The record gives the reactivity of an RNA of 177 nucleotides to 2A3 and DMS. Conditions: 150 mM KOAc, 10 mM MgCl2 and 150 mM bicine (pH 8.5), 24 C. Source: RMDB library OK2TST, as collected in RNAgym. For DMS the reverse transcriptase was MarathonRT. The DMS profile rests on 4,055 reads. For 2A3, 2,451 sequencing reads were counted.
RNA sequence: GGGAACGACUCGAGUAGAGUCGAAAAGACGUGGCCGGGCCUCGACGCGGCAGCCACCUGCGGCGGACGGGUGGUGCUUCGAACUGUUCCAGUUCGACGCCUUUGUACACCGCGAGGUAGACGUCGAGCAAUAGAUAGGCUUCGGCCUAUCUAUUGCAAAAGAAACAACAACAACAAC
Reactivity to 2A3 in 0.01 (KOAc 150mM, MgCl2 10mM, bicine 150mM(pH8.5), 24C), signal-to-noise 2, nucleotides 027 to 126: g050a000c050g020u060g050g030c020c000g100g140g040c010c020u020c040g020a080c030g010c040g070g000c010a020g030c010c010a020c000c010u070g060c040g100g000c040g020g080a060c030g020g040g000u060g010g020u060g010c050u040u000c000g000a010a010c010u040g190u300u140c220c020a030g000u010u000c000g000a020c020g000c020c020u050u130u120g040u030a060c080a020c030c000g010c040g030a010g020g020u050a060g040a140c020g000u030c010g010a030
Reactivity to DMS in 0.01 (KOAc 150mM, MgCl2 10mM, bicine 150mM(pH8.5), 24C), signal-to-noise 2, nucleotides 027 to 126: g010a080c050g020u000g010g030c020c050g010g000g000c020c010u000c070g010a120c040g030c050g010g010c030a140g000c070c050a050c050c020u000g020c020g020g010c040g000g000a100c060g010g000g000u000g010g020u010g010c140u010u000c000g020a010a030c000u010g030u010u010c210c060a080g010u000u000c000g000a020c020g000c000c030u020u020u010g000u010a080c060a110c020c000g020c030g000a070g020g010u000a060g010a100c010g000u000c020g010a170